Source information:
An RNA of 177 nucleotides, treated with DMS and 2A3 and read out base by base. The RNA was probed in 150 mM KOAc, 10 mM MgCl2 and 150 mM bicine (pH 8.5) at 24 C. For 2A3 the reverse transcriptase was SuperScript II with manganese. For 2A3, 1,022 sequencing reads were counted.
[RMDB]
RNA sequence: GGGAACGACUCGAGUAGAGUCGAAAAAGUGAGUGAGUGAGUGAAUGAAUGAAGCAUUUUCCAGCCUUCAUUUCUGGGAAUCACUGAAUCUCUGUCAAUUCAUGUACAGAUGGGAAAGAGUGAAAUGCGUCGAAGACUAUUUCGAUAGUCUUCGACGAAAAGAAACAACAACAACAAC
Reactivity to DMS in 0.01 (KOAc 150mM, MgCl2 10mM, bicine 150mM(pH8.5), 24C), signal-to-noise 6, nucleotides 027 to 126: a060g020u020g010a040g020u000g000a050g010u010g000a050g010u000g010a100a080u010g000a030a010u000g000a050a020g030c040a120u000u010u010u000c070c050a200g000c150c020u000u000c020a010u000u000u000c030u000g010g010g010a110a110u000c010a020c020u000g010a090a080u000c040u010c000u000g010u000c040a080a110u010u000c130a080u010g000u010a030c060a050g000a060u000g010g010g010a050a040a100g010a070g010u000g000a030a090a070u010g010
Reactivity to 2A3 in 0.01 (KOAc 150mM, MgCl2 10mM, bicine 150mM(pH8.5), 24C), signal-to-noise 1, nucleotides 027 to 126: a000g110u050g000a000g050u080g020a060g020u050g030a040g070u100g060a040a040u040g030a000a050u010g020a060a020g050c060a060u140u050u120u130c020c020a040g000c030c000u030u000c010a030u040u050u110c030u050g000g030g170a030a060u050c030a020c040u010g040a090a050u060c040u000c010u050g040u000c000a050a080u230u120c030a000u140g040u110a030c010a000g090a150u110g000g060g050a050a090a060g090a040g000u040g010a060a090a040u160g020